Chemical mapping of a 177-nucleotide RNA with 2A3 and DMS. For DMS, 1,148 sequencing reads were counted. For DMS the reverse transcriptase was MarathonRT.

[RMDB]
RNA sequence: GGGAACGACUCGAGUAGAGUCGAAAAAAGAAACGGACUGCUUUUGCACAGAGCGAUACCGGGAAGCAGAUCAUGACAGCUAUGAUAGACGCUGUUCGCAGGAAAGAAGCAUCUGGUAUGGUAGAACCAAGAGUCAGAGGUUCGCCUCUGACUCUUGAAAAGAAACAACAACAACAAC
Reactivity to 2A3 in 0.01 (KOAc 150mM, MgCl2 10mM, bicine 150mM(pH8.5), 24C), signal-to-noise 1, nucleotides 027 to 126: a000a000g140a040a020a020c030g020g050a020c000u060g060c020u040u030u170u260g030c100a100c050a050g010a020g110c030g030a030u050a090c010c010g000g040g000a040a000g000c030a000g030a110u080c000a030u140g030a050c040a010g000c050u110a030u230g080a090u150a120g100a040c070g000c030u030g000u130u010c080g030c070a050g000g150a120a130a100g050a060a000g000c000a050u020c030u060g000g030u060a000u060g090g000u050a030g000a050a040c010
Reactivity to DMS in 0.01 (KOAc 150mM, MgCl2 10mM, bicine 150mM(pH8.5), 24C), signal-to-noise 2, nucleotides 027 to 126: a040a050g000a050a050a090c090g000g030a080c060u020g000c020u000u000u000u000g000c130a160c100a080g000a060g010c040g020a120u010a030c060c020g020g010g010a060a030g010c020a040g010a090u000c030a100u010g000a080c050a040g000c030u000a080u010g030a180u000a050g040a120c140g000c020u000g000u000u000c090g040c060a120g000g000a040a080a030g010a080a050g000c040a060u000c020u000g010g030u010a010u000g000g020u000a040g010a110a140c240